[RMDB]
RNA sequence: GGGAACGACUCGAGUAGAGUCGAAAAACUGCAUCUACGGAUGCAGAACUACGUUCAUCCAAUUUGUUUGGACGCAUGAAAUGAGAAUAGGGAACGGGAUUCUCAUACGCAGGCUACGGCCUGCGAAAAAACUCCUUAUGCUUCGGCAUAAGGAGAAGAGUCUUAGCUUCUUCGGAAGCUAAGACUCAAAAGAAACAACAACAACAAC
Reactivity to 2A3 in 0.01 (KOAc 150mM, MgCl2 10mM, bicine 150mM(pH8.5), 24C), signal-to-noise 1, nucleotides 027 to 156: a000c000u000g010c010a000u030c000u000a040c250g100g000a020u000g000c000a000g010a000a000c040u140a030c010g020u010u010c000a000u000c020c020a130a140u000u060u300g160u030u020u000g000g000a000c020g040c030a040u110g090a200a250a080u010g000a010g020a010a000u050a060g050g030g000a040a010c030g010g030g010a000u010u000c000u000c010a000u010a000c000g040c000a000g000g010c040u050a090c300g150g000c010c000u020g000c000g020a010a010a010a010a010a010c000u000c000c000u000u000a000u010g000c000u030u010c230g090g000c000a000u000a000a000g000g010a010g000a000a000
The record gives the reactivity of an RNA of 207 nucleotides to 2A3.
Reactivities are given for positions 27 through 156.
For 2A3, 567 sequencing reads were counted.
For 2A3 the reverse transcriptase was SuperScript II with manganese.
The reactions ran in a buffer of 150 mM KOAc, 10 mM MgCl2 and 150 mM bicine (pH 8.5), at 24 C.